An RNA of 177 nucleotides, treated with DMS and 2A3 and read out base by base. Reactivities are given for positions 27 through 126. It was measured as part of the RMDB library OK2TST. For DMS, 3,431 sequencing reads were counted. The RNA was probed in 150 mM KOAc, 10 mM MgCl2 and 150 mM bicine (pH 8.5) at 24 C. The 2A3 profile rests on 4,412 reads.

[RMDB]
RNA sequence: GGGAACGACUCGAGUAGAGUCGAAAACCGGCCCAAUCCUGUUCGUAGUCGAUGUACGUGAACGCGGCGUCGUCGGGCUGCAGGCCGGCACGCUCGCGCAGCAAGGACAAGACAGAAGAGUCGGACAUACGGUCAAGUUAUUCGUAACUUGACCGUAAAAAGAAACAACAACAACAAC
Reactivity to DMS in 0.01 (KOAc 150mM, MgCl2 10mM, bicine 150mM(pH8.5), 24C), signal-to-noise 4, nucleotides 027 to 126: c010c010g010g010c000c010c030a100a110u010c090c040u000g000u000u000c050g020u000a210g030u000c010g010a170u010g000u010a040c160g030u000g030a090a140c020g000c010g000g000c000g000u010c180g020u000c000g030g020g000c030u010g010c210a100g010g000c010c000g000g020c030a030c040g020c000u030c020g020c000g010c070a160g000c040a080a100g020g020a020c030a120a220g000a020c020a040g000a070a100g000a090g010u000c020g010g000a150c150a150
Reactivity to 2A3 in 0.01 (KOAc 150mM, MgCl2 10mM, bicine 150mM(pH8.5), 24C), signal-to-noise 4, nucleotides 027 to 126: c010c000g020g010c050c010c000a060a170u110c010c030u040g070u130u100c060g150u190a090g020u020c020g080a190u110g060u120a100c090g070u050g090a130a030c010g000c010g000g000c000g010u020c060g000u010c010g080g080g000c030u110g060c050a080g070g130c000c000g000g020c010a000c000g010c000u290c050g010c000g000c020a030g010c020a020a030g030g000a000c020a000a060g010a020c010a010g080a090a040g030a040g040u020c010g000g000a030c010a060